The record gives the reactivity of an RNA of 177 nucleotides to DMS and 2A3.

[RMDB]
RNA sequence: GGGAACGACUCGAGUAGAGUCGAAAAAUGAUGGAUACAAACGUUAAACGACAGUUUGUAUCUAUGAUGGCUAAAGAACUUUGUAUUGCAGCAAAAAGCCACGUAGACAAAAUGCUAAGUGGCUGAGUCGGCUUUUUAGUUUCGACUAAAAAGCCGAAAAAGAAACAACAACAACAAC
Reactivity to DMS in 0.01 (KOAc 150mM, MgCl2 10mM, bicine 150mM(pH8.5), 24C), signal-to-noise 1, nucleotides 027 to 126: a060u010g000a000u000g000g000a000u010a000c000a010a000a010c010g020u000u000a110a090a280c280g010a000c110a210g020u000u000u000g010u000a000u000c000u000a020u000g000a020u000g000g000c200u020a050a050a150g040a060a130c070u020u010u000g010u010a080u000u030g000c160a080g020c100a080a020a100a040a010g000c000c000a040c000g020u000a080g000a090c110a080a070a150a040u000g010c000u000a000a000g010u000g000g000c000u030g000a050g020
Reactivity to 2A3 in 0.01 (KOAc 150mM, MgCl2 10mM, bicine 150mM(pH8.5), 24C), signal-to-noise 2, nucleotides 027 to 126: a000u300g000a020u080g000g000a000u000a010c000a000a000a000c010g080u090u160a190a090a030c160g110a000c000a020g000u000u000u000g000u010a000u000c000u000a000u000g070a030u030g030g020c100u210a140a050a050g030a080a060c020u200u080u040g020u080a030u030u190g070c040a080g050c040a010a040a080a000a000g020c010c010a000c000g000u000a060g000a050c040a110a160a020a000u200g020c000u010a110a000g000u000g000g000c000u000g000a000g060